Chemical mapping of a 177-nucleotide RNA with 2A3 and DMS. The reactions ran in a buffer of 150 mM KOAc, 10 mM MgCl2 and 150 mM bicine (pH 8.5), at 24 C. For 2A3, 1,956 sequencing reads were counted.
RNA sequence: GGGAACGACUCGAGUAGAGUCGAAAACAGAUUUACUUCACUAAGCAAACAUUCAAUUUAAGUUCGGGACUUUUUUGCGUCUGACAGGGAGAGCGUAUGGUUCCGUUUCCUCAGUAAUGCAAAGCAACAGUCCUGGUGAUUUCGAUCACCAGGACUGAAAAGAAACAACAACAACAAC
Reactivity to 2A3 in 0.01 (KOAc 150mM, MgCl2 10mM, bicine 150mM(pH8.5), 24C), signal-to-noise 5, nucleotides 027 to 126: c040a010g170a050u140u160u200a080c080u070u120c050a070c170u150a010a110g030c050a080a060a040c020a060u080u110c040a130a160u080u130u300a180a030g050u020u020c020g000g020g010a030c000u000u100u060u030u220u300g020c020g000u040c050u040g150a140c020a120g080g060g000a100g000a020g010c010g030u020a050u180g010g000u050u020c000c010g010u010u010u010c020c000u060c060a040g030u180a090a020u080g040c070a060a030a040g020c020a010a120
Reactivity to DMS in 0.01 (KOAc 150mM, MgCl2 10mM, bicine 150mM(pH8.5), 24C), signal-to-noise 1, nucleotides 027 to 126: c030a130g070a110u000u060u000a000c050u000u000c000a110c000u000a160a200g060c000a070a000a190c050a040u050u030c120a120a090u000u050u000a090a090g000u000u000c000g000g060g000a150c030u000u020u020u020u000u000g030c030g040u080c000u000g000a260c200a060g000g000g000a000g000a110g000c010g050u000a020u010g010g000u000u000c060c000g030u000u000u000c000c000u000c130a150g010u060a030a020u000g000c000a030a000a130g000c070a020a110

Values cover nucleotides 27 to 126.